[RMDB]
This 177-nucleotide RNA was probed chemically with 2A3 and DMS. Reactivities are given for positions 27 through 126. High 2A3 reactivity points to a flexible backbone, as in loops and unpaired stretches. For DMS, 770 sequencing reads were counted. It was measured as part of the RMDB library VIROID. The 2A3 profile rests on 2,352 reads.

RNA sequence: GGGAACGACUCGAGUAGAGUCGAAAAGUCGUCGUCGACGAAGGCGGUGACAAAGGAGCUGCCAGCAGUAAGCCUGACUCGGUCGCACCAGUUCCGCUGUGCGUUCGCCUACGAAGGCAACGUACGGGGCAAUAUGAUUCUUCGGAAUCAUAUUGCCAAAAGAAACAACAACAACAAC
Reactivity to 2A3 in 0.01 (KOAc 150mM, MgCl2 10mM, bicine 150mM(pH8.5), 24C), signal-to-noise 2, nucleotides 027 to 126: g020u000c000g000u020c000g020u030c000g020a270c170g080a170a050g040g000c010g020g010u020g000a000c010a040a040a000g020g010a010g010c000u030g010c030c010a020g040c000a000g060u110a140a080g060c010c020u050g060a300c010u040c140g000g000u030c020g000c010a020c020c000a010g020u050u020c010c000g010c030u050g010u000g000c010g010u000u030c070g010c040c000u060a160c240g180a270a050g000g000c000a000a000c010g000u000a010c000g000g050
Reactivity to DMS in 0.01 (KOAc 150mM, MgCl2 10mM, bicine 150mM(pH8.5), 24C), signal-to-noise 2, nucleotides 027 to 126: g000u000c040g020u000c020g000u000c000g000a260c300g010a180a210g000g000c000g030g000u020g000a020c020a050a130a120g020g000a080g030c020u000g010c020c070a080g030c030a010g010u000a050a160g010c220c000u010g000a020c010u000c050g010g010u000c270g000c050a080c020c020a120g020u000u000c010c000g060c030u000g000u000g020c000g000u000u000c160g000c000c000u000a170c300g040a200a030g000g010c040a030a010c030g010u000a030c000g020g010